[RMDB]
RNA sequence: GGGAACGACUCGAGUAGAGUCGAAAAUGGCCUACAGUAGUCCGGAGUUAUAUCUCACUACAAACGGUGUCAAUGCUGAUGUCAAGUAUGUGAUAUACAAUAUAGAGAGAGAUCCUAAAAGAACAAAGCACAGUGUAAAGUUCGCUUUACACUGUGCAAAAGAAACAACAACAACAAC
Reactivity to DMS in 0.01 (KOAc 150mM, MgCl2 10mM, bicine 150mM(pH8.5), 24C), signal-to-noise 2, nucleotides 027 to 126: u030g000g000c040c000u000a080c120a120g030u000a050g020u030c150c060g030g000a060g000u000u000a080u000a060u020c010u000c080a050c020u000a040c110a080a100a080c290g030g010u000g010u000c010a070a070u020g020c080u000g000a130u000g010u030c180a070a200g000u000a000u010g010u000g020a040u000a070u000a050c020a090a150u010a100u020a040g010a130g020a060g010a060g000a060u010c010c010u000a040a070a070a070g020a120a050c110a030a070a180
Reactivity to 2A3 in 0.01 (KOAc 150mM, MgCl2 10mM, bicine 150mM(pH8.5), 24C), signal-to-noise 1, nucleotides 027 to 126: u090g060g010c000c000u040a050c050a050g060u060a020g020u030c110c020g080g020a060g040u100u030a130u030a060u130c010u010c040a040c000u080a020c020a050a040a000c050g070g000u080g000u040c010a030a070u120g060c020u060g040a050u080g060u060c010a050a000g040u010a040u090g080u020g030a020u020a000u000a120c000a040a020u160a000u060a090g080a010g000a000g000a020g010a040u010c000c010u100a090a040a020a060g150a060a090c030a070a070a010
Record summary
This 177-nucleotide RNA was probed chemically with DMS and 2A3. The DMS profile rests on 926 reads. For 2A3 the reverse transcriptase was SuperScript II with manganese. For 2A3, 1,061 sequencing reads were counted. Values cover nucleotides 27 to 126. The RNA was probed in 150 mM KOAc, 10 mM MgCl2 and 150 mM bicine (pH 8.5) at 24 C. As a SHAPE reagent, 2A3 marks flexible, mostly unpaired nucleotides at the ribose 2'-OH.